[RMDB]
RNA sequence: GGGAACGACUCGAGUAGAGUCGAAAAGAUAUGGACCAGGAACUACAUUUGAAGCACGUUGAAAUCGGAAACGAUGGAGUGCGUAGAAUGCCUGGUCCUAAGUCAAAGUACGUCUUCGGACGUACAACACAGUCGAUCUGUUCGCAGAUCGACUGUGAAAAGAAACAACAACAACAAC
Reactivity to 2A3 in 0.01 (KOAc 150mM, MgCl2 10mM, bicine 150mM(pH8.5), 24C), signal-to-noise 1, nucleotides 027 to 126: g020a020u060a040u150g000g000a010c010c000a000g030g020a070a050c060u210a030c230a060u030u030u040g150a140a010g000c010a010c020g180u300u030g050a010a050a010u010c000g000g080a070a030a040c000g010a010u020g040g020a060g000u010g000c000g010u010a020g040a000a010u010g020c000c010u020g000g010u030c000c000u000a000a000g000u000c030a000a020a010g000u000a000c010g010u030c000u030u080c240g110g030a010c000g000u010a010c000a010a000
Reactivity to DMS in 0.01 (KOAc 150mM, MgCl2 10mM, bicine 150mM(pH8.5), 24C), signal-to-noise 2, nucleotides 027 to 126: g010a010u030a300u000g000g000a000c000c010a010g030g000a110a100c080u000a300c010a010u000u010u000g000a230a300g020c000a000c000g000u020u010g000a060a190a020u000c000g030g000a050a070a080c020g050a010u000g000g030a070g040u000g030c000g040u000a130g000a010a000u000g000c000c000u010g000g000u000c000c000u000a010a040g000u000c080a150a200a150g000u000a000c010g010u000c000u010u010c170g010g000a030c000g000u000a010c000a110a300